[RMDB]
RNA sequence: GGGAACGACUCGAGUAGAGUCGAAAAAAAAAUAAGCGAAGAUAGCUCAGUCGGUAGAGCAGCAGGACCGAAACCUGCGAGUAAAGGGAUCAAGACCCUGUUCGCGCAAAAACCGUAGUUAAAAAAAGUAUUAAACUCAGUUCGCUGAGUUUAAUACAAAAGAAACAACAACAACAAC
Reactivity to DMS in 0.01 (KOAc 150mM, MgCl2 10mM, bicine 150mM(pH8.5), 24C), signal-to-noise 1, nucleotides 027 to 126: a000a080a150a040a090u000a050a100g010c000g030a000a030g030a300u000a050g010c030u010c000a090g030u040c070g010g010u020a050g010a040g020c000a220g020c000a030g000g010a070c070c130g000a110a120a020c020c000u000g050c000g000a100g000u010a030a080a020g000g000g000a040u010c250a050a210g000a100c030c000c010u010g000u010u000c020g000c010g010c100a020a020a050a100a030c020c020g010u000a090g030u000u010a000a000a020a050a010a030a060
Chemical mapping of a 177-nucleotide RNA with DMS. Source: RMDB library M2PK90, as collected in RNAgym. For DMS the reverse transcriptase was MarathonRT. The reactions ran in a buffer of 150 mM KOAc, 10 mM MgCl2 and 150 mM bicine (pH 8.5), at 24 C. Values cover nucleotides 27 to 126.